[RMDB]
RNA sequence: GGGAACGACUCGAGUAGAGUCGAAAAGAUAUGGAAUGUCAUCGCGAAGAACUUGUUGUCGGAAACGAUUUCGAACAAGGGAGCGAUGUCAUUCCUAAGUCAAAACACUACACUUCGGUGUAGUGAAGAUAAAAGCAAGGUUCGCCUUGCUUUUAUCAAAAGAAACAACAACAACAAC
Reactivity to DMS in 0.01 (KOAc 150mM, MgCl2 10mM, bicine 150mM(pH8.5), 24C), signal-to-noise 6, nucleotides 027 to 126: g000a020u000a170u010g000g000a030a000u000g010u000c000a010u000c000g040c000g020a150a160g010a100a100c010u000u000g000u000u000g000u000c000g000g000a020a030a070c070g000a050u000u010u000c160g020a020a020c010a010a010g010g000g010a050g020c000g020a010u000g000u000c000a000u000u000c000c000u000a010a050g000u010c020a070a110a060a270c010a010c000u000a000c010a000c000u000u000c190g030g010u000g010u000a000g000u000g000a030a060
Reactivity to 2A3 in 0.01 (KOAc 150mM, MgCl2 10mM, bicine 150mM(pH8.5), 24C), signal-to-noise 8, nucleotides 027 to 126: g000a000u020a020u060g000g000a010a010u010g010u000c010a010u010c000g000c020g160a300a300g030a130a080c000u000u010g010u030u030g090u050c000g010g000a020a010a020c050g080a120u080u220u300c190g060a020a000c010a010a010g020g000g030a200g020c000g000a000u000g000u000c000a000u000u000c000c000u000a010a000g000u000c010a040a020a080a090c010a010c000u010a000c010a000c000u060u140c300g130g000u000g000u010a000g000u000g000a010a030
Chemical mapping of a 177-nucleotide RNA with DMS and 2A3. For DMS the reverse transcriptase was MarathonRT. For DMS, 9,219 sequencing reads were counted. Reactivities are given for positions 27 through 126. The reactions ran in a buffer of 150 mM KOAc, 10 mM MgCl2 and 150 mM bicine (pH 8.5), at 24 C. The data come from the RNA Mapping Database (RMDB), library TTRDEL.